[RMDB]
RNA sequence: GGGAACGACUCGAGUAGAGUCGAAAAAACAACUUGGGAUGAUCCUUUCCUUCCAUUUUGAUGCCAACCUCUUUUUAUUUUUAAGUGUUGAAGCUGCACAAACUGAAUAAUUUAAACAAAUGCUGGUUUCUGCCAAAGAUGGACACGAAUAAGUUAAGUACUAGUAAUUAUUCGUAAUUACUAGUACAAAAGAAACAACAACAACAAC
Reactivity to DMS in 0.01 (KOAc 150mM, MgCl2 10mM, bicine 150mM(pH8.5), 24C), signal-to-noise 1, nucleotides 027 to 156: a110a030c020a010a010c080u000u000g020g000g020a050u020g000a130u030c110c050u000u010u010c020c050u020u000c020c020a090u010u020u010u000g030a160u020g040c080c070a060a060c010c010u010c000u000u000u000u000u000a040u070u050u030u020u000a030a160g050u010g010u000u000g020a060a150g010c020u000g000c060a120c010a060a040a090c000u000g000a070a080u010a050a100u000u010u000a070a060a110c080a090a180a100u000g010c030u020g000g000u020u000u000c060u030g020c050c060a060a020a030g010a180u020g030g010a070c030a020c020g020a040a110u020a010a070g000u000u000a070a180
Reactivity to 2A3 in 0.01 (KOAc 150mM, MgCl2 10mM, bicine 150mM(pH8.5), 24C), signal-to-noise 2, nucleotides 027 to 156: a000a000c060a020a000c040u060u030g030g000g010a050u080g050a110u130c020c000u050u060u060c020c000u020u000c030c010a060u100u070u050u060g090a050u120g010c020c000a020a040c080c000u030c030u070u140u020u060u040a120u090u050u030u050u090a190a030g000u020g020u080u020g070a070a010g050c070u060g020c030a040c000a070a060a020c020u050g050a030a050u140a100a060u070u090u200a110a090a020c030a050a060a030u070g010c000u010g030g000u010u000u100c050u040g000c000c020a060a080a000g040a040u090g020g000a020c030a000c080g060a060a060u140a190a010g100u210u190a180a010